Description:
Source: RMDB library OK2TST, as collected in RNAgym. An RNA of 177 nucleotides, treated with 2A3 and DMS and read out base by base. For DMS, 10,279 sequencing reads were counted.
RNA sequence: GGGAACGACUCGAGUAGAGUCGAAAAUCGGCGCCGAGUUGGACUUGGUGCACAGCUCCUGGAUGCCACCAGAAUCACCCAAACCGCUGUGCAGCGAGGCACUGCUGGGCGAUGGCAACUCCACAAAACAUUCUGACUUAUUCGUAAGUCAGAAUGUAAAAGAAACAACAACAACAAC
Reactivity to 2A3 in 0.01 (KOAc 150mM, MgCl2 10mM, bicine 150mM(pH8.5), 24C), signal-to-noise 6, nucleotides 027 to 126: u050c010g040g000c010g000c010c020g140a010g020u060u080g040g040a060c000u020u010g090g120u010g110c000a000c000a020g010c000u070c040c020u020g010g020a070u100g070c050c030a060c020c010a070g090a060a090u130c050a090c020c020c010a060a120a060c050c050g010c000u000g000u000g020c000a020g050c010g010a020g060g020c150a010c120u020g000c000u060g060g030g000c010g020a030u020g020g000c010a020a110c050u030c020c020a100c030a070a100a030
Reactivity to DMS in 0.01 (KOAc 150mM, MgCl2 10mM, bicine 150mM(pH8.5), 24C), signal-to-noise 8, nucleotides 027 to 126: u000c060g010g010c020g010c010c010g010a030g010u010u000g020g000a280c010u000u000g010g000u000g000c010a010c010a010g000c010u010c170c120u000g000g010a070u000g000c180c070a110c090c130a080g000a160a100u010c070a080c020c000c030a040a100a130c220c160g000c000u000g010u000g000c010a020g020c020g000a030g000g010c110a080c030u000g000c010u000g000g000g010c000g000a040u000g000g010c120a080a100c110u000c010c020a100c210a090a070a120
Record summary: DMS adducts were read by reverse transcription with MarathonRT. For 2A3, 20,078 sequencing reads were counted.